[RMDB]
RNA sequence: GGGAACGACUCGAGUAGAGUCGAAAAGAAAGAAAGAAAGCGGUUGGGUGGGUCCAUCGACCGUCGUGGGGUAUUCGGACGCUUUACCACGACGCGAGGAAAUAGCGAGACCGACCACCCCCUUUAACAGAGGUAUAGUAGUUCGCUACUAUACCAAGUUCGCUAGUAUGUUCGCAUACUAGCGAACAAAAGAAACAACAACAACAAC
Reactivity to 2A3 in 0.01 (KOAc 150mM, MgCl2 10mM, bicine 150mM(pH8.5), 24C), signal-to-noise 1, nucleotides 027 to 156: g080a000a030a050g050a070a070a000g130a130a090a000g100c300g060g050u190u170g070g000g020u010g000g000g060u010c020c010a080u120c000g000a000c030c000g030u000c000g000u000g000g040g040g040u040a210u040u250c010g100g120a150c050g070c020u030u060u150a090c010c000a000c100g000a000c000g000c010g090a110g000g070a000a130a000u130a080g050c050g020a010g050a030c020c030g000a000c000c000a000c010c000c000c000c000u020u130u020a130a070c140a030g050a060g200g000u000a000u000a010g000u000a000g020u000u060c150g000c060u000a000c000u000a030u040a010c000c000a010a010
This 207-nucleotide RNA was probed chemically with 2A3. The RNA was probed in 150 mM KOAc, 10 mM MgCl2 and 150 mM bicine (pH 8.5) at 24 C. For 2A3 the reverse transcriptase was SuperScript II with manganese.